[RMDB]
RNA sequence: GGGAACGACUCGAGUAGAGUCGAAAAAAGUCGGAAGAUUUGAAACCUUUCAGGUGUGAAGGCAAUUUCUCUUUCUUUGAUGCUAGUGUAGAGUCAUUGAGUGGUGACACUUACUUGCUUUUUACCAACUCAAUUUUGAUGUUGGAUAAGCAAGGUCCAACUCUCAUGACUUCGGUCAUGAGAGUUGAAAAGAAACAACAACAACAAC
Reactivity to 2A3 in 0.01 (KOAc 150mM, MgCl2 10mM, bicine 150mM(pH8.5), 24C), signal-to-noise 3, nucleotides 027 to 156: a000a000g100u070c070g050g010a040a020g060a120u110u210u300g160a220a270a220c030c030u070u020u060c090a090g110g030u040g070u100g110a050a010g000g000c060a030a040u030u100u030c030u000c000u000u100u000c080u030u030u070g070a060u100g020c040u060a020g050u080g020u140a060g010a030g070u020c010a020u040u120g070a060g040u050g040g010u040g010a020c020a010c130u010u120a030c000u000u000g000c000u000u060u030u050u080a130c000c000a000a000c000u030c080a090a250u160u150u130u300g030a050u170g000u010u000g010g030a020u020a040a000g000c030a020a000g010g010u030c010
Reactivity to DMS in 0.01 (KOAc 150mM, MgCl2 10mM, bicine 150mM(pH8.5), 24C), signal-to-noise 1, nucleotides 027 to 156: a050a080g020u000c040g010g030a100a080g000a070u010u000u020g000a100a150a040c010c000u000u000u000c020a150g030g040u000g010u000g000a040a050g040g000c020a090a130u000u000u000c020u010c010u000u000u000c040u010u000u000g020a080u000g000c010u000a040g000u010g020u000a090g000a070g020u000c050a020u000u010g000a070g070u000g020g000u000g000a220c120a060c060u000u000a070c020u010u020g000c000u000u000u010u010u010a150c000c010a000a010c000u000c010a080a300u000u000u000u000g020a080u000g010u010u020g010g060a070u000a020a010g010c020a000a010g030g000u010c050

The record gives the reactivity of an RNA of 207 nucleotides to 2A3 and DMS. DMS adducts were read by reverse transcription with MarathonRT. Source: RMDB library OK3TST, as collected in RNAgym. Reactivities are given for positions 27 through 156.